[RMDB]
RNA sequence: GGGAACGACUCGAGUAGAGUCGAAAAGCGUCUGCUAUGUGCCCAUGGCCAUGUUAGGGUGGAAGGGGGAAGACAUGAUGCCACCCCUUCAGGGGACCUACCUCACAGUGUUUGGGGAGACUUGCCCCACUCUUCAUGGGUUCGCCCAUGAAGAGUGAAAAGAAACAACAACAACAAC
Reactivity to 2A3 in 0.01 (KOAc 150mM, MgCl2 10mM, bicine 150mM(pH8.5), 24C), signal-to-noise 2, nucleotides 027 to 126: g020c030g040u090c140u130g080c070u110a060u160g090u180g060c020c020c040a140u100g000g030c030c000a040u080g040u100u090a070g050g080g010u090g130g030a030a010g000g080g000g000g000a060a030g020a020c020a080u270g030a070u130g110c020c000a090c000c010c020c000u030u030c020a010g000g010g000g030a040c000c020u060a150c000c020u020c000a030c020a110g210u110g060u200u150u070g000g020g010g010a000g010a050c000u040u110g100c000c000c010
Reactivity to DMS in 0.01 (KOAc 150mM, MgCl2 10mM, bicine 150mM(pH8.5), 24C), signal-to-noise 3, nucleotides 027 to 126: g010c060g000u010c050u000g000c040u000a060u000g010u010g010c030c020c120a140u020g000g000c000c020a010u000g010u010u000a060g010g000g030u000g020g010a020a030g000g000g010g010g010a170a120g020a030c040a100u010g000a150u010g020c030c020a160c010c000c010c010u000u010c040a090g010g010g000g000a090c070c030u010a090c020c010u000c030a040c090a170g020u020g020u000u010u000g010g010g000g010a050g000a060c070u010u000g000c000c000c020
This 177-nucleotide RNA was probed chemically with 2A3 and DMS.
As a SHAPE reagent, 2A3 marks flexible, mostly unpaired nucleotides at the ribose 2'-OH.
Conditions: 150 mM KOAc, 10 mM MgCl2 and 150 mM bicine (pH 8.5), 24 C.
For DMS, 4,175 sequencing reads were counted.